[RMDB]
RNA sequence: GGGAACGACUCGAGUAGAGUCGAAAACCUAGCUUCGGCUAGGAAAUAAACCUUUGUGCGUUUGACGGCUGGCAAGCAAGUUCUCGCCCAUUGGGCGAGGUCAGCUUGUGAUGACCCAGCCCGAGCACUCUGGUGUCCAGUCACCUUCGGGUGACAACAUCUUUAUUAGUUUCGACUAAUAAAGAUGAAAAGAAACAACAACAACAAC
Reactivity to 2A3 in 0.01 (KOAc 150mM, MgCl2 10mM, bicine 150mM(pH8.5), 24C), signal-to-noise 6, nucleotides 027 to 156: c000c000u000a000g010c000u060u050c300g120g000c000u010a010g000g040a030a100a020u110a020a060a010c000c000u010u010u010g020u010g010c060g060u110u150u260g090a090c030g010g010c000u000g000g000c010a090a060g000c010a020a020g040u110u030c000u000c000g010c010c030c140a300u280u300g000g000g000c000g010a000g000g010u080c080a030g000c000u000u000g010u020g050a220u130g030a040c020c010c010a000g000c000c000c000g010a000g000c000a000c000u000c010u000g010g000u030g030u000c030c040a070g010u000c000a010c000c000u030u120c290g100g000g000u000g000a000c000a000a010
Reactivity to DMS in 0.01 (KOAc 150mM, MgCl2 10mM, bicine 150mM(pH8.5), 24C), signal-to-noise 2, nucleotides 027 to 156: c000c000u000a010g020c010u000u010c300g060g010c000u010a000g010g000a000a050a090u000a100a110a090c010c010u010u000u000g020u010g010c010g000u000u000u000g010a110c180g020g000c000u010g000g010c020a070a190g010c000a030a060g020u000u000c000u000c020g040c000c000c020a300u000u000g030g020g000c000g010a010g030g000u010c150a090g000c000u000u010g020u010g020a090u000g000a090c300c000c010a070g020c000c000c010g000a090g000c010a020c010u010c080u000g010g010u000g010u010c050c040a100g010u000c000a010c000c000u000u000c300g040g040g030u000g000a020c000a040a180
This 207-nucleotide RNA was probed chemically with 2A3 and DMS. It was measured as part of the RMDB library RNAMAK. The RNA was probed in 150 mM KOAc, 10 mM MgCl2 and 150 mM bicine (pH 8.5) at 24 C. The DMS profile rests on 9,044 reads.